[RMDB]
RNA sequence: GGGAACGACUCGAGUAGAGUCGAAAACGAGACGGCUUCGGCCGUCUCGAAAGAAACCGAAAGGAGUGGCGAGCUGCAGCCACAAUAUAUCAAAUGCAGCAAAAAGGAAGCCGUUCGCGGCUUCCAACUAGAAUUAUAGGUUCGCCUAUAAUUCUAGAAAAGAAACAACAACAACAAC
Reactivity to 2A3 in 0.01 (KOAc 150mM, MgCl2 10mM, bicine 150mM(pH8.5), 24C), signal-to-noise 2, nucleotides 027 to 126: c010g020a000g020a000c010g000g050c050u120u170c300g150g010c000c010g020u010c000u000c010g000a010a000a000g010a030a050a000c040c020g070a050a060a040g100g060a150g030u000g000g010c030g040a040g000c000u010g000c000a000g020c010c000a000c000a010a010u090a000u020a010u080c060a010a000a030u060g010c010a000g000c020a060a040a020a000a010g000g000a030a000g000c020c010g040u100u150c240g010c070g120g000c010u000u000c000c000a010a010
Reactivity to DMS in 0.01 (KOAc 150mM, MgCl2 10mM, bicine 150mM(pH8.5), 24C), signal-to-noise 2, nucleotides 027 to 126: c010g000a030g020a040c010g020g040c000u000u000c250g040g000c010c000g020u000c000u020c000g010a020a060a090g000a120a110a240c010c010g000a070a070a140g000g000a120g030u000g040g000c000g000a160g000c000u000g000c000a150g000c000c010a000c000a060a070u000a070u000a080u020c120a000a010a070u010g010c000a030g020c000a020a030a070a070a090g000g000a010a010g000c000c000g010u000u000c150g010c030g010g000c010u000u000c000c030a010a030